[RMDB]
RNA sequence: GGGAACGACUCGAGUAGAGUCGAAAAGUUGAGAGCGUUUAACUUAAGUCUUUUUUAUUAGCUUACAAAAACUAUAUACAAGUGGUGGUAGUCCGCCACUCUAAGGGGACGCCUUUAGAAGAAGAGGGAAAGGCACUAAGCUUCGGCUUAGUGCCAACACGUAACUGAACUUCGGUUCAGUUACGUGAAAAGAAACAACAACAACAAC
Reactivity to 2A3 in 0.01 (KOAc 150mM, MgCl2 10mM, bicine 150mM(pH8.5), 24C), signal-to-noise 3, nucleotides 027 to 156: g030u060u080g030a050g010a020g070c030g030u090u090u110a150a070c050u090u070a100a040g060u130c070u070u260u020u040u020u040a170u150u110a110g010c020u070u080a030c030a020a120a040a050a000c040u060a040u060a040u030a300c060a110a000g000u000g040g010u000g000g060u060a070g090u060c000c020g000c020c010a010c000u000c000u010a020a000g030g000g010g010a010c050g080c010c000u080u090u070a060g010a130a000g060a040a020g050a070g000g020g050a080a080a130g020g030c000a000c000u000a000a000g000c000u010u070c280g020g000c000u000u000a000g010u000g000c000c000a000a000
An RNA of 207 nucleotides, treated with 2A3 and read out base by base. The RNA was probed in 150 mM KOAc, 10 mM MgCl2 and 150 mM bicine (pH 8.5) at 24 C. The 2A3 profile rests on 1,185 reads. It was measured as part of the RMDB library M2RFPK.